Record summary
Chemical mapping of a 177-nucleotide RNA with DMS. Reactivities are given for positions 27 through 126. Reactivities are rounded to 0.1 and cut off at 0 and 3. The RNA was probed in 150 mM KOAc, 10 mM MgCl2 and 150 mM bicine (pH 8.5) at 24 C.
RNA sequence: GGGAACGACUCGAGUAGAGUCGAAAAGAUAUGGACUGUUCAAUGAAUUUCCUUUACGCUAGCCUCUAUUCGGAAACGAAUAGAAGGCUUGGACCGUAUGGGAAAUUCAUUGAACAGUCCUAAGUCACAUAAAACUCUACUUCGGUAGAGUUUUAUGAAAAGAAACAACAACAACAAC
Reactivity to DMS in 0.01 (KOAc 150mM, MgCl2 10mM, bicine 150mM(pH8.5), 24C), signal-to-noise 2, nucleotides 027 to 126: g010a090u000a300u000g000g000a000c000u000g000u010u000c000a010a010u000g000a020a000u000u000u000c000c000u000u010u000a000c000g000c030u000a010g000c000c000u000c000u000a000u000u000c010g000g000a130a120a220c000g000a010a010u010a000g010a070a080g030g030c010u000u010g010g010a150c300c030g020u000a000u000g010g000g000a000a000a000u000u000c000a000u000u010g010a000a000c000a000g010u000c000c000u000a010a090g020u010c040a280